[RMDB]
RNA sequence: GGGAACGACUCGAGUAGAGUCGAAAAGAAAUGUCCAGUCGGCUUGGCUGCGAAGCGUCUUCGGACGGGCCAAAUGCGACAGUCGCCGACGAGAUGCUGUUAGGCCCGUUUAAGCAUCGGACUAGAAGGGCGUUAGUUUGUUCGCAGGCUGGCGCCCAAAAGAAACAACAACAACAAC
Reactivity to 2A3 in 0.01 (KOAc 150mM, MgCl2 10mM, bicine 150mM(pH8.5), 24C), signal-to-noise 9, nucleotides 027 to 126: g060a000a080a020u130g000u000c010c010a000g010u000c010g000g030c050u160u300g020g000c000u010g010c020g030a040a010g100c020g030u020c030u050u060c140g080g000a000c000g010g030g020c060c040a070a120a090u250g040c040g050a080c050a010g010u030c040g000c010c010g000a010c010g000a020g000a010u020g000c020u030g050u210u140a070g050g030c000c000c000g030u070u080u060a040a000g000c000a010u010c020g000g000a010c010u040a040g090a150a130
Reactivity to DMS in 0.01 (KOAc 150mM, MgCl2 10mM, bicine 150mM(pH8.5), 24C), signal-to-noise 9, nucleotides 027 to 126: g000a070a090a070u030g000u000c000c010a180g000u000c000g000g010c020u030u030g020g010c000u000g010c050g000a080a110g010c060g010u010c030u010u040c140g010g000a020c030g000g010g000c100c100a070a120a100u040g010c060g010a140c030a030g020u000c040g010c010c020g010a020c010g000a120g010a020u000g000c000u000g000u010u020a100g000g000c000c000c020g010u010u010u010a110a050g010c020a010u000c010g010g010a020c010u000a080g010a140a150